Chemical mapping of a 177-nucleotide RNA with 2A3 and DMS. Conditions: 150 mM KOAc, 10 mM MgCl2 and 150 mM bicine (pH 8.5), 24 C.
[RMDB]
RNA sequence: GGGAACGACUCGAGUAGAGUCGAAAAACAGGAGAUUCCGAAACGUAUGUGUGCACGCUGCACUUUGAAUCCGCAUUGAGGGUGGUAACUUUCCAGUCGCGCAGAGACGUUGCACGACAACAUUGUGAUACCAACGGAUUUUCGAAUCCGUUGGUAUAAAAGAAACAACAACAACAAC
Reactivity to 2A3 in 0.01 (KOAc 150mM, MgCl2 10mM, bicine 150mM(pH8.5), 24C), signal-to-noise 6, nucleotides 027 to 126: a000c050a040g060g080a100g030a150u130u010c040c020g030a080a090a010c070g070u100a090u160g100u020g030u030g010c060a030c090g080c060u060g020c000a030c000u000u020u060g060a060a060u060c010c020g040c060a080u040u160g070a140g010g060g010u060g000g020u070a100a090c070u080u060u040c040c010a030g050u050c030g010c010g020c070a010g030a020g030a120c110g060u120u050g010c020a010c060g090a030c020a070a010c010a090u040u180g080u060g120
Reactivity to DMS in 0.01 (KOAc 150mM, MgCl2 10mM, bicine 150mM(pH8.5), 24C), signal-to-noise 5, nucleotides 027 to 126: a120c120a080g010g000a060g020a130u010u020c010c030g020a090a100a100c120g000u010a080u020g020u000g010u000g000c030a060c120g000c070u010g000c020a060c040u010u000u000g020a090a060u000c070c040g000c110a080u030u020g020a080g010g010g030u010g010g000u010a050a070c100u020u000u000c020c040a130g020u010c040g010c070g010c000a070g010a120g010a130c140g020u010u010g010c020a060c040g000a050c070a090a070c160a100u010u010g000u020g020
Reactivities are given for positions 27 through 126. For DMS, 10,914 sequencing reads were counted.